[RMDB]
RNA sequence: GGGAACGACUCGAGUAGAGUCGAAAAGACACCAGUAACUGUAAAUGAUGUCAAAGAGUACUACUCAGAAAGUAAGUCAAAGAUAGAAAUAAGGCCAACUGGGACAAAGCUCCCUACUGAGAUCAUGAAAGGUAUAGAGGAGUCCUUGGUAAAUGGGCCUAGCUGUGAUUUUCGAAUCACAGCUAGGAAAAGAAACAACAACAACAAC
Reactivity to 2A3 in 0.01 (KOAc 150mM, MgCl2 10mM, bicine 150mM(pH8.5), 24C), signal-to-noise 2, nucleotides 027 to 156: g000a010c000a010c040c000a050g030u090a080a020c060u010g070u120a100a060a080u110g020a060u040g010u020c040a080a060a000g050a000g020u070a080c030u000a000c000u040c010a010g080a120a090a050g060u060a060a000g050u040c060a010a120a060g040a010u120a000g040a040a080a060u090a070a000g000g010c050c040a020a010c050u070g010g000g000a040c040a000a160a000g050c030u020c000c020c010u000a030c070u050g060a040g030a070u110c060a050u080g160a050a050a010g000g030u010a020u040a110g070a020g020g000a000g020u010c000c000u000u020g000g050u090a080a100a090u060g000g000g000
Reactivity to DMS in 0.01 (KOAc 150mM, MgCl2 10mM, bicine 150mM(pH8.5), 24C), signal-to-noise 1, nucleotides 027 to 156: g010a100c040a000c010c010a050g000u040a050a250c000u000g050u000a190a070a280u050g000a070u010g000u000c040a070a140a130g010a170g020u000a060c050u010a000c000u000c010a220g020a160a250a060g000u000a050a160g040u010c040a040a080a120g000a120u010a120g020a070a110a080u010a060a120g000g010c010c020a020a060c060u010g000g010g000a130c070a020a090a080g000c120u000c000c000c000u000a080c020u000g000a060g000a060u040c060a040u000g000a070a110a040g000g000u000a060u000a030g000a180g010g010a020g010u000c000c000u000u010g040g010u000a040a020a010u010g000g000g000
The data come from the RNA Mapping Database (RMDB), library OK3TST. This 207-nucleotide RNA was probed chemically with 2A3 and DMS. 2A3 adducts were read by reverse transcription with SuperScript II with manganese.